[RMDB]
RNA sequence: GGGAACGACUCGAGUAGAGUCGAAAAUGUGAUUUGGGCCGACAUCCCCGCCGAAAGAAAUUCGUGAAGAUCUAAGGUCGCUUCUGGAUGGAUUUGCCACCGGGUGCACACCAUCUUCAUGUACAAUAUGGUUCUGUGUUUUCGAACACAGAACCAUAAAAGAAACAACAACAACAAC
Reactivity to DMS in 0.01 (KOAc 150mM, MgCl2 10mM, bicine 150mM(pH8.5), 24C), signal-to-noise 1, nucleotides 027 to 126: u020g020u020g020a300u080u010u000g000g000g000c050c040g000a010c010a070u000c000c080c000c080g030c030c060g010a020a070a150g060a020a080a190u000u030c000g000u000g020a000a000g000a000u000c300u020a300a070g000g040u000c300g000c000u000u000c000u000g020g000a260u000g000g040a290u040u030u030g000c030c000a000c090c020g000g070g000u040g050c020a000c170a110c050c030a030u000c040u010u000c000a000u000g000u000a010c090a130a050u010
Reactivity to 2A3 in 0.01 (KOAc 150mM, MgCl2 10mM, bicine 150mM(pH8.5), 24C), signal-to-noise 2, nucleotides 027 to 126: u120g020u000g050a050u020u100u120g020g000g050c000c000g090a020c040a060u040c000c000c060c000g000c020c010g140a080a130a000g050a020a160a060u170u130c030g020u010g000a000a000g010a020u000c070u160a120a000g010g000u100c060g000c000u080u000c010u020g070g110a250u030g030g050a060u120u040u300g280c050c000a000c020c000g020g020g000u020g000c040a010c000a000c050c020a030u000c020u000u000c000a060u070g020u000a010c080a060a060u030

Structure probing data (DMS and 2A3) for a 177-nucleotide construct. The data come from the RNA Mapping Database (RMDB), library RFM100. The 2A3 profile rests on 709 reads. The reactions ran in a buffer of 150 mM KOAc, 10 mM MgCl2 and 150 mM bicine (pH 8.5), at 24 C.